[RMDB]
RNA sequence: GGGAACGACUCGAGUAGAGUCGAAAACUUGACCAGUCUUCUCGCCUAUUUGCGACGAAUACUGCGUCGUCAGGAUACACUUAUAGGCUUGUUAUGUCUGGAUUUGGACUCCUUGGCGGGUAGCAAACCAUGCUCCUACUUUCGAGUAGGAGCAUGGAAAAGAAACAACAACAACAAC
Reactivity to DMS in 0.01 (KOAc 150mM, MgCl2 10mM, bicine 150mM(pH8.5), 24C), signal-to-noise 2, nucleotides 027 to 126: c070u000u020g000a070c020c030a020g010u000c020u000u010c010u000c000g000c000c140u020a080u000u020u030g000c000g010a030c100g000a070a050u030a040c100u030g000c050g050u000c000g010u020c090a050g000g020a020u010a080c060a040c030u010u000a030u020a000g010g020c040u000u030g010u010u040a030u040g010u010c000u000g020g010a030u000u020u030g000g000a100c150u020c000c000u010u010g000g000c000g020g000g000u000a040g000c050a040a100a120
Reactivity to 2A3 in 0.01 (KOAc 150mM, MgCl2 10mM, bicine 150mM(pH8.5), 24C), signal-to-noise 3, nucleotides 027 to 126: c010u060u100g040a020c000c000a020g010u030c010u010u000c000u000c000g000c000c050u170a130u080u160u180g020c010g020a000c040g000a050a030u060a130c030u070g040c040g010u010c000g010u000c000a000g000g000a030u010a020c010a000c010u020u000a030u000a020g040g000c040u070u110g170u160u300a240u240g020u000c020u010g030g020a060u010u030u020g020g000a060c050u000c000c000u010u030g000g000c010g020g010g000u030a020g010c040a000a040a000

Structure probing data (DMS and 2A3) for a 177-nucleotide construct.
Reactivities are given for positions 27 through 126.
The reactions ran in a buffer of 150 mM KOAc, 10 mM MgCl2 and 150 mM bicine (pH 8.5), at 24 C.
The DMS profile rests on 3,931 reads.
As a SHAPE reagent, 2A3 marks flexible, mostly unpaired nucleotides at the ribose 2'-OH.